[RMDB]
RNA sequence: GGGAACGACUCGAGUAGAGUCGAAAAGAUAUGGACGCUGUACUUUUGACGGACGCCGGUGAAAUACUCGGAAACGAGGAGUCCGAUAAGUACUGCGUCCUAAGUCAAAGCAAGGUUCGCCUUGCAACCGUUAAGCAUGGUUCGCCAUGCUUAACGGAAAAGAAACAACAACAACAAC
Reactivity to DMS in 0.01 (KOAc 150mM, MgCl2 10mM, bicine 150mM(pH8.5), 24C), signal-to-noise 2, nucleotides 027 to 126: g000a020u010a280u000g000g000a020c010g000c000u000g010u000a010c010u010u000u010u020g020a210c100g010g000a020c010g030c110c140g000g030u000g010a100a120a070u010a160c050u000c030g000g000a080a040a130c030g000a020g000g000a070g000u000c010c000g000a180u010a010a030g010u000a000c000u000g000c000g020u010c000c000u000a000a050g000u000c020a080a100a190g000c000a000a010g020g010u000u000c230g000c000c020u010u000g000c020a050a130
Reactivity to 2A3 in 0.01 (KOAc 150mM, MgCl2 10mM, bicine 150mM(pH8.5), 24C), signal-to-noise 3, nucleotides 027 to 126: g020a010u040a030u100g010g030a000c000g010c040u020g030u040a040c000u080u200u210u270g290a120c020g000g000a000c030g080c140c050g060g000u100g080a190a200a080u240a120c040u040c050g020g000a070a070a030c050g050a070g060g030a060g040u000c010c020g070a100u050a190a020g010u010a010c000u000g000c000g000u000c000c000u000a010a000g000u010c030a060a110a000g000c000a000a010g030g010u100u160c200g140c030c000u000u000g000c000a000a020